[RMDB]
This 177-nucleotide RNA was probed chemically with 2A3 and DMS. The RNA was probed in 150 mM KOAc, 10 mM MgCl2 and 150 mM bicine (pH 8.5) at 24 C. Reactivities are rounded to 0.1 and cut off at 0 and 3. The 2A3 profile rests on 2,442 reads.
RNA sequence: GGGAACGACUCGAGUAGAGUCGAAAAGGUGCCUACACAUUUACUUUCUGAUCCAACCAGUGAUCUUGUUAACUGUUUUCAAAGCUUAGGGGUUACUAAUCGAGUCUCCUUGAUAAUAGGUAAGACACUAAGUGAAAAACUUCGGUUUUUCACUUAGAAAAGAAACAACAACAACAAC
Reactivity to 2A3 in 0.01 (KOAc 150mM, MgCl2 10mM, bicine 150mM(pH8.5), 24C), signal-to-noise 5, nucleotides 027 to 126: g050g010u060g030c000c020u110a030c040a000c000a100u070u080u090a060c040u030u140u070c060u090g030a030u020c040c010a000a200c010c030a050g030u040g170a080u020c000u040u060g050u060u060a070a070c060u040g040u040u040u110u150c090a080a080a060g020c060u050u100a040g000g000g030g030u040u020a060c020u060a040a110u090c040g010a020g040u000c000u000c020c000u020u040g060a030u070a260a050u050a050g140g060u150a130a000g040a010c060a010
Reactivity to DMS in 0.01 (KOAc 150mM, MgCl2 10mM, bicine 150mM(pH8.5), 24C), signal-to-noise 4, nucleotides 027 to 126: g000g030u010g000c020c020u000a040c090a070c070a050u020u020u000a070c110u010u000u000c040u020g000a120u010c040c040a110a120c150c100a090g020u030g010a040u000c030u010u000g020u040u010a090a070c060u000g030u000u020u040u000c100a070a050a100g020c040u000u010a070g000g000g010g010u030u000a040c030u000a010a060u000c080g000a080g000u000c000u000c010c000u010u000g000a060u050a070a090u030a060g000g000u020a050a060g010a150c160a150